Source: RMDB library OK3TST, as collected in RNAgym. The record gives the reactivity of an RNA of 207 nucleotides to 2A3 and DMS. The DMS profile rests on 18,184 reads. For 2A3, 7,863 sequencing reads were counted. In probing experiments dimethyl sulfate is read out at A N1 and C N3, which are open when not base-paired. Conditions: 150 mM KOAc, 10 mM MgCl2 and 150 mM bicine (pH 8.5), 24 C. 2A3 adducts were read by reverse transcription with SuperScript II with manganese.

RNA sequence: GGGAACGACUCGAGUAGAGUCGAAAAGGUGGUGUUCGGGACUAAGGAAGCUGCUGACUUGACCAGGUCUUACUUGCUGUUGCUAGUGUAGCAGUUUAUUAGCUUGUCCCAAGACCGGUCUGUAUCAGGAGUCCACAGAUUGUGGCCCGCUCUGGCCCAAUAACACGCAAUUCGUUGCGUGUUAUUGAAAAGAAACAACAACAACAAC
Reactivity to 2A3 in 0.01 (KOAc 150mM, MgCl2 10mM, bicine 150mM(pH8.5), 24C), signal-to-noise 8, nucleotides 027 to 156: g070g000u050g010g020u040g040u080u090c080g030g020g050a030c050u130a070a060g070g000a030a030g010c020u070g000c020u000g010a030c020u100u120g030a050c020c050a090g010g040u030c040u080u080a100c030u070u070g030c010u030g050u170u070g020c010u040a050g090u140g080u270a000g010c010a010g000u070u080u090a200u060u120a060g040c000u020u030g030u050c040c040c010a000a000g020a000c010c000g000g000u000c010u030g100u060a100u060c030a050g040g010a020g060u020c030c010a030c010a030g180a120u140u230g030u030g020g000c010c010c000g020c010u020c030u050g030g010c000c010
Reactivity to DMS in 0.01 (KOAc 150mM, MgCl2 10mM, bicine 150mM(pH8.5), 24C), signal-to-noise 4, nucleotides 027 to 156: g040g030u000g020g020u000g000u000u000c070g020g020g010a110c030u010a070a100g020g010a100a150g020c000u000g000c020u010g020a060c030u010u000g010a050c030c030a120g020g010u000c060u010u010a110c080u000u020g020c020u000g010u000u000g010c030u020a110g020u010g030u000a050g030c020a060g020u000u010u010a080u000u000a110g020c060u010u010g020u000c020c020c040a060a060g010a040c020c010g020g010u000c020u000g010u010a090u000c040a100g010g010a080g000u000c010c040a070c030a090g000a180u000u000g020u000g000g020c110c010c030g000c050u000c030u000g000g030c020c060